[RMDB]
RNA sequence: GGGAACGACUCGAGUAGAGUCGAAAAGAUAUGGAAGAUACCAGGGAGCUAUCCCAGUCGGAAACGACUGGGUAGCUUUGAUCUGGACGUCUUCCUAAGUCAAAAUCGGUAGCUUCGGCUACCGAAAGUUAUUGUCCUAGUUCGCUAGGACAAUAACAAAAGAAACAACAACAACAAC
Reactivity to DMS in 0.01 (KOAc 150mM, MgCl2 10mM, bicine 150mM(pH8.5), 24C), signal-to-noise 3, nucleotides 027 to 126: g010a050u000a300u010g000g000a010a020g010a020u000a120c020c000a010g010g000g010a010g020c000u000a010u020c000c000c000a020g000u010c000g020g010a210a090a210c010g000a020c000u000g000g000g030u000a000g000c000u000u000u010g000a030u000c000u010g000g000a070c200g020u000c010u000u000c000c000u010a020a090g010u000c040a120a070a170a170u000c010g010g000u000a010g020c000u000u020c280g020g000c000u000a000c000c000g000a000a020a090
Reactivity to 2A3 in 0.01 (KOAc 150mM, MgCl2 10mM, bicine 150mM(pH8.5), 24C), signal-to-noise 2, nucleotides 027 to 126: g030a030u080a040u170g000g000a010a000g020a010u030a080c010c020a010g000g010g010a000g000c020u030a040u300c000c010c010a000g000u010c010g020g070a060a060a100c000g020a000c000u010g030g000g000u000a010g000c000u020u100u010g010a000u010c010u000g000g180a300c140g020u000c000u020u000c000c010u000a140a010g060u030c060a040a010a030a300u060c000g000g000u010a000g000c020u060u040c300g140g000c000u000a000c000c000g000a000a000a000
Chemical mapping of a 177-nucleotide RNA with DMS and 2A3. For DMS the reverse transcriptase was MarathonRT. Reactivities are given for positions 27 through 126. The reactions ran in a buffer of 150 mM KOAc, 10 mM MgCl2 and 150 mM bicine (pH 8.5), at 24 C. It was measured as part of the RMDB library TTRDES. The DMS profile rests on 3,836 reads.